[RMDB]
The record gives the reactivity of an RNA of 177 nucleotides to 2A3 and DMS.

RNA sequence: GGGAACGACUCGAGUAGAGUCGAAAAUAAGAGACACCCUUUGUACGUGGACUUCAGUGACGUGGGGUGGAAUGACUGGAUUGUGGCUCCCCCGGGGUAUCACGCCUUUUACUGCCACGGAGAAUGCCGUUGCAUGGUGUUUCGACACCAUGCAACGAAAAGAAACAACAACAACAAC
Reactivity to 2A3 in 0.01 (KOAc 150mM, MgCl2 10mM, bicine 150mM(pH8.5), 24C), signal-to-noise 3, nucleotides 027 to 126: u150a000a030g070a000g020a030c020a030c030c020c000u040u150u230g130u110a040c040g040u040g040g110a060c030u100u070c190a050g040u050g040a060c010g070u120g000g000g050g020u010g040g000a060a090u060g090a030c090u030g000g020a170u130u160g000u070g080g000c010u060c010c040c000c010c020g000g000g000g000u030a060u230c020a020c060g000c040c000u050u050u020u070a030c050u050g000c010c000a000c000g010g000a110g030a070a100u190g040c020
Reactivity to DMS in 0.01 (KOAc 150mM, MgCl2 10mM, bicine 150mM(pH8.5), 24C), signal-to-noise 2, nucleotides 027 to 126: u010a100a030g000a090g000a170c100a010c030c000c010u050u010u060g020u040a050c130g020u000g010g020a150c040u010u060c140a060g000u020g000a020c060g050u000g000g000g000g030u000g030g040a110a100u000g000a110c070u020g000g020a050u010u010g000u010g000g000c080u000c000c000c040c070c070g040g030g000g110u000a090u050c150a120c240g000c000c030u000u040u000u020a010c030u000g000c030c010a030c050g000g000a110g010a130a050u030g010c080
The DMS profile rests on 2,164 reads. The RNA was probed in 150 mM KOAc, 10 mM MgCl2 and 150 mM bicine (pH 8.5) at 24 C.